[RMDB]
RNA sequence: GGGAACGACUCGAGUAGAGUCGAAAAGGUCACAGCACCCAAACCGCAGGCCCUGCUCUGGCAGGCAGGCAAAGCUAGGCAGAAGAGGAUUCCCAGGAUCCUGGGUCUGUUCCCUGCCCCAGUGCUGGUCCACAUCCUAAUUCGUUAGGAUGUGGACAAAAGAAACAACAACAACAAC
Reactivity to DMS in 0.01 (KOAc 150mM, MgCl2 10mM, bicine 150mM(pH8.5), 24C), signal-to-noise 4, nucleotides 027 to 126: g020g000u000c080a160c080a060g020c060a080c020c030c060a050a100a100c100c090g010c080a070g000g000c140c030c010u000g010c020u000c040u000g010g000c100a130g000g010c010a010g000g010c130a040a070a110g010c090u010a120g010g010c030a040g010a100a090g010a050g000g000a090u000u010c010c050c150a130g000g000a080u010c050c000u000g020g000g000u000c000u000g000u000u000c060c060c000u000g010c030c000c010c050a100g000u000g000c060u010g000
Reactivity to 2A3 in 0.01 (KOAc 150mM, MgCl2 10mM, bicine 150mM(pH8.5), 24C), signal-to-noise 2, nucleotides 027 to 126: g040g000u080c060a020c030a140g020c040a060c000c010c000a040a060a030c040c040g020c050a020g020g080c010c000c000u010g000c010u020c020u060g080g000c050a060g050g010c000a010g030g010c030a040a090a020g010c020u100a050g060g000c020a010g020a120a020g030a060g060g000a020u090u070c030c060c030a030g070g020a060u110c030c020u030g000g080g040u000c010u060g140u040u010c010c000c000u020g020c000c010c000c000a030g020u050g060c030u060g050